[RMDB]
RNA sequence: GGGAACGACUCGAGUAGAGUCGAAAAUAAUUGCUUACAUGGAAACACUUUGAUGGCCAUUCUGCUAUAGUGUGAAGCUUCUAUGAGUAAGGUACCAAGGAUUCCCUUUCUCUGAGCAGCAUUGUAAAAAGGCCCUACUUUUCAUCAGAGCAGAAAAGGCAGCUAAUAUGUUCGCAUAUUAGCUGCCAAAAGAAACAACAACAACAAC
Reactivity to 2A3 in 0.01 (KOAc 150mM, MgCl2 10mM, bicine 150mM(pH8.5), 24C), signal-to-noise 2, nucleotides 027 to 156: u130a020a040u090u000g010c020u050u090a050c060a070u020g030g020a050a070a000c060a040c090u200u180u050g150a170u160g040g020c030c010a120u180u080c050u110g030c050u030a040u030a080g020u060g000u030g120a160a050g010c000u000u070c020u140a070u200g010a000g000u020a020a000g000g000u010a040c070c080a110a130g110g000a200u070u160c020c030c030u000u020u000c000u000c010u020g040a000g010c010a000g000c000a040u000u070g050u040a000a040a040a040a040g030g000c000c000c000u060a120c030u000u020u000u000c000a020u000c020a040g030a010g010c000a000g060a030a180a000a060